[RMDB]
Overview:
An RNA of 177 nucleotides, treated with DMS and 2A3 and read out base by base. 2A3 adducts were read by reverse transcription with SuperScript II with manganese. The reactions ran in a buffer of 150 mM KOAc, 10 mM MgCl2 and 150 mM bicine (pH 8.5), at 24 C. DMS adducts were read by reverse transcription with MarathonRT.

RNA sequence: GGGAACGACUCGAGUAGAGUCGAAAAUGCUUGUUCUUCAUUUAGUGCUGACAAAUCUAGGGCAUCCUUGUCCUGCCAUCUUAAGAAAUCAGUGUACGAUUUCAACACAUCACACUCCUUCGGUAUCAUUCCUAUACGCGUUCGCGCGUAUAGGAAUAAAAGAAACAACAACAACAAC
Reactivity to DMS in 0.01 (KOAc 150mM, MgCl2 10mM, bicine 150mM(pH8.5), 24C), signal-to-noise 3, nucleotides 027 to 126: u010g020c070u000u020g020u010u000c030u010u000c050a050u020u000u000a080g010u020g030c080u010g000a090c100a030a060a070u000c100u020a080g000g000g010c020a070u010c060c070u010u000g010u000c000c030u010g000c070c060a070u000c070u000u000a080a150g000a050a060a010u000c020a090g010u000g000u010a120c110g010a050u000u000u000c030a090a130c130a050c060a030u020c030a020c080a050c030u000c020c030u000u000c070g010g000u000a080u000c110
Reactivity to 2A3 in 0.01 (KOAc 150mM, MgCl2 10mM, bicine 150mM(pH8.5), 24C), signal-to-noise 2, nucleotides 027 to 126: u060g030c010u060u060g020u060u060c010u070u020c030a120u040u060u080a100g030u060g070c070u040g020a040c070a070a090a050u040c030u070a040g000g020g000c020a040u090c050c020u060u020g030u020c010c010u000g000c010c020a080u040c060u110u090a080a020g030a020a030a020u040c030a050g040u050g120u300a090c060g020a020u010u050u090c000a000a030c050a000c010a040u110c000a020c000a000c050u030c020c050u080u100c010g090g000u080a040u160c040